[RMDB]
RNA sequence: GGGAACGACUCGAGUAGAGUCGAAAAGUAUGGAUGCCACCGUGACGGCUCAAUCACACAAGUGCCAACGAUAACGAGGCGCUCGCUAUUGCUGCGUAACUGACGGCCUGGCGGUCUGACGUUACAAAAAACGAAAAGUGGUUCGCCACUUUUCGAACAUCGUGAUUCAGUUCGCUGAAUCACGAUGAAAAGAAACAACAACAACAAC
Reactivity to 2A3 in 0.01 (KOAc 150mM, MgCl2 10mM, bicine 150mM(pH8.5), 24C), signal-to-noise 3, nucleotides 027 to 156: g060u050a080u150g020g020a030u030g030c030c020a040c020c010g020u040g070a060c030g050g020c010u020c060a030a080u120c020a030c010a020c010a120a000g040u020g030c020c010a140a070c100g060a130u110a190a050c060g020a060g070g020c020g010c030u020c020g040c040u080a060u100u160g050c060u060g020c040g020u020a050a060c010u050g010a030c020g010g020c000c010u070g100g000c070g020g010u010c010u010g020a030c030g010u020u050a030c010a000a070a000a020a020a000c000g000a000a000a000a000g010u000g050g030u020u050c090g040c060c000a000c000u000u000u020u000c000g000a020a010
Reactivity to DMS in 0.01 (KOAc 150mM, MgCl2 10mM, bicine 150mM(pH8.5), 24C), signal-to-noise 1, nucleotides 027 to 156: g040u010a050u010g000g000a150u000g040c050c010a060c010c040g040u000g030a090c100g020g030c080u000c070a050a130u010c040a140c080a120c030a110a080g000u010g000c000c000a130a120c140g000a150u000a060a130c110g000a300g020g020c050g060c020u010c000g020c030u000a060u000u000g030c030u010g020c000g020u000a080a040c020u000g000a300c270g020g000c020c020u000g030g070c160g030g060u000c010u000g010a280c150g030u000u000a030c000a000a030a030a100a070a210c000g010a000a010a020a020g020u000g000g010u010u010c300g000c010c000a000c000u000u000u000u000c000g000a060a130

This 207-nucleotide RNA was probed chemically with 2A3 and DMS. The data come from the RNA Mapping Database (RMDB), library M2RFPK. The DMS profile rests on 1,823 reads. Conditions: 150 mM KOAc, 10 mM MgCl2 and 150 mM bicine (pH 8.5), 24 C. Values cover nucleotides 27 to 156.